Source information
This 177-nucleotide RNA was probed chemically with 2A3 and DMS. Source: RMDB library OK2TST, as collected in RNAgym. 2A3 adducts were read by reverse transcription with SuperScript II with manganese. As a SHAPE reagent, 2A3 marks flexible, mostly unpaired nucleotides at the ribose 2'-OH. The RNA was probed in 150 mM KOAc, 10 mM MgCl2 and 150 mM bicine (pH 8.5) at 24 C. For DMS, 9,782 sequencing reads were counted.
RNA sequence: GGGAACGACUCGAGUAGAGUCGAAAACAUUAAGCUGUCUACAGACAAACCUCGACAACUCGAUUUUGCAAGGUGAAGGCAGGCAGAAGAGUAAAGCGUCCGCGCCAGGGAUGGCGCGGGUCGAGCCGAUCAGUUAUUAGUUCGCUAAUAACUGAUCAAAAGAAACAACAACAACAAC
Reactivity to 2A3 in 0.01 (KOAc 150mM, MgCl2 10mM, bicine 150mM(pH8.5), 24C), signal-to-noise 5, nucleotides 027 to 126: c020a030u160u190a130a030g040c010u010g030u030c030u080a080c040a100g110a060c060a100a110a050c020c010u020c030g080a060c050a070a040c030u050c120g210a230u030u060u060u130g020c030a030a040g040g000u050g050a040a040g040g010c020a000g020g000c000a000g050a120a020g030a020g060u130a080a160a040g060c030g040u020c010c010g030c010g010c000c010a060g020g060g040a080u030g000g000c000g000c000g000g000g000u030c000g000a020g040c040c050
Reactivity to DMS in 0.01 (KOAc 150mM, MgCl2 10mM, bicine 150mM(pH8.5), 24C), signal-to-noise 7, nucleotides 027 to 126: c050a090u000u010a120a130g020c030u000g010u000c010u000a090c090a120g010a150c110a090a130a090c070c020u000c040g000a120c030a050a050c110u010c110g000a160u010u010u000u000g010c030a070a030g000g010u000g000a110a130g000g010c040a020g000g000c010a020g000a050a080g010a150g010u000a050a110a170g000c070g000u000c000c000g010c000g010c000c000a020g010g030g000a150u000g000g020c010g020c000g000g000g010u000c010g000a090g010c180c120